The record gives the reactivity of an RNA of 207 nucleotides to 2A3 and DMS. The RNA was probed in 150 mM KOAc, 10 mM MgCl2 and 150 mM bicine (pH 8.5) at 24 C. The DMS profile rests on 1,457 reads. Source: RMDB library OK3TST, as collected in RNAgym. 2A3 adducts were read by reverse transcription with SuperScript II with manganese.
[RMDB]
RNA sequence: GGGAACGACUCGAGUAGAGUCGAAAAGUUUUCUACAUUCAUAACAUAGGUAGAGGCUCACUGAUGUUAAAUAACUAUGAUGGCCACAUGGAAAGUUAAUGGCAGUUAGAAUUAGAACUCCUGCUAUUUGACUCACUGAUUGGUAACCACGUGGAGAGAUUAAUCGUCAGUUCGCUGACGAUUAAUCAAAAGAAACAACAACAACAAC
Reactivity to 2A3 in 0.01 (KOAc 150mM, MgCl2 10mM, bicine 150mM(pH8.5), 24C), signal-to-noise 3, nucleotides 027 to 156: g010u020u020u120u000c000u030a080c020a100u000u260c030a070u200a300a100c040a080u160a120g000g050u030a000g000a010g020g020c020u020c110a030c050u120g040a100u060g060u090u120a070a160a220u100a160a000c050u040a010u180g080a050u040g040g000c030c020a040c050a060u060g020g050a200a140a010g000u040u020a000a020u000g020g000c020a010g000u090u250a040g060a100a120u110u080a040g010a120a030c010u010c020c000u030g000c000u000a070u040u080u050g020a020c000u010c060a050c020u030g050a160u060u050g010g030u010a060a090c010c000a010c020g020u020g000g020a080g000a000
Reactivity to DMS in 0.01 (KOAc 150mM, MgCl2 10mM, bicine 150mM(pH8.5), 24C), signal-to-noise 1, nucleotides 027 to 156: g010u000u000u010u010c000u000a040c020a090u010u000c080a230u020a160a120c070a130u000a110g050g040u000a030g000a080g050g040c000u000c000a080c080u000g000a080u000g010u010u010a080a140a150u010a040a150c020u000a040u000g000a090u000g000g060c080c010a050c050a040u010g000g010a120a110a150g030u010u030a020a030u040g000g000c030a050g000u000u010a090g010a090a300u000u000a180g000a110a160c000u020c140c020u000g000c010u000a050u000u000u000g040a030c010u010c060a230c080u000g010a150u000u000g020g020u010a070a150c000c010a070c140g040u000g000g000a300g010a260